[RMDB]
RNA sequence: GGGAACGACUCGAGUAGAGUCGAAAAAGCGGGCCUCCCGAUCCGAGUGGUCCGCGGCGCAUCGAGUUUGGAGUCAUCCGGACGAAGGGCUGAGAUGACCCACAGUCGGGUGAUCCACCAGGAGGGUACGCUAAUACUAGUUCGCUAGUAUUAGCGUAAAAGAAACAACAACAACAAC
Reactivity to 2A3 in 0.01 (KOAc 150mM, MgCl2 10mM, bicine 150mM(pH8.5), 24C), signal-to-noise 2, nucleotides 027 to 126: a000g030c010g000g000g000c010c000u030c000c000c020g040a060u090c090c060g010a050g020u020g000g000u000c000c000g000c010g010g020c040g000c010a130u060c020g040a090g050u070u110u070g050g020a110g100u020c010a000u000c010c040g090g050a060c030g070a120a080g040g040g020c000u060g090a140g010a180u100g150a300c000c010c000a020c000a000g060u000c000g030g000g010u000g010a020u000c000c000a020c000c010a020g030g040a040g010g020g040u010
Reactivity to DMS in 0.01 (KOAc 150mM, MgCl2 10mM, bicine 150mM(pH8.5), 24C), signal-to-noise 2, nucleotides 027 to 126: a110g010c020g000g010g030c010c020u000c000c050c030g000a070u000c160c050g010a080g000u010g010g000u000c020c020g020c020g010g000c050g000c040a080u010c000g020a080g020u010u000u000g010g020a100g010u010c030a000u010c000c020g020g010a010c020g000a210a270g000g010g020c020u000g010a160g000a120u010g000a110c000c010c010a030c130a210g010u000c010g020g010g010u020g010a060u010c020c030a100c070c020a110g010g030a080g000g010g000u000

The record gives the reactivity of an RNA of 177 nucleotides to 2A3 and DMS. Conditions: 150 mM KOAc, 10 mM MgCl2 and 150 mM bicine (pH 8.5), 24 C. 2A3 adducts were read by reverse transcription with SuperScript II with manganese. For DMS the reverse transcriptase was MarathonRT. The data come from the RNA Mapping Database (RMDB), library VIROID. The DMS profile rests on 1,677 reads.